[RMDB]
The record gives the reactivity of an RNA of 177 nucleotides to 2A3 and DMS. The reactions ran in a buffer of 150 mM KOAc, 10 mM MgCl2 and 150 mM bicine (pH 8.5), at 24 C.
RNA sequence: GGGAACGACUCGAGUAGAGUCGAAAACACGGCAAACCAUGGCGCCAGGGGUAGGCGUAUGUGUGGCCCAAUGGGACCUCAAGGCCCCAUCUCAACCUUUCCAGACCUGGACAUUGCAAUAUACCCAGUCAUCCGAUGAUUUCGAUCAUCGGAUGACAAAAGAAACAACAACAACAAC
Reactivity to 2A3 in 0.01 (KOAc 150mM, MgCl2 10mM, bicine 150mM(pH8.5), 24C), signal-to-noise 1, nucleotides 027 to 126: c020a000c040g000g030c040a050a000a090c020c020a050u060g070g090c040g020c060c060a080g050g010g000g000u050a020g030g010c060g060u100a030u090g160u020g030u070g000g010c010c000c020a010a040u040g000g000g030a050c020c000u140c110a080a110g040g000c000c010c000c050a040u040c020u030c030a110a100c000c010u060u100u040c100c010a070g040a180c040c080u050g000g000a030c010a050u000u110g000c050a130a020u100a030u030a190c020c030c000a030
Reactivity to DMS in 0.01 (KOAc 150mM, MgCl2 10mM, bicine 150mM(pH8.5), 24C), signal-to-noise 2, nucleotides 027 to 126: c080a120c200g010g010c090a040a090a080c080c040a020u000g050g030c020g000c000c010a140g010g000g040g030u000a080g000g010c020g000u010a030u020g010u010g010u000g000g000c020c030c070a080a030u000g010g010g020a030c010c000u000c230a140a110g020g030c000c010c010c010a030u010c110u000c150a080a080c040c020u010u000u000c020c030a100g000a080c120c060u120g010g010a050c090a040u000u000g000c040a080a050u010a090u020a030c000c010c000a190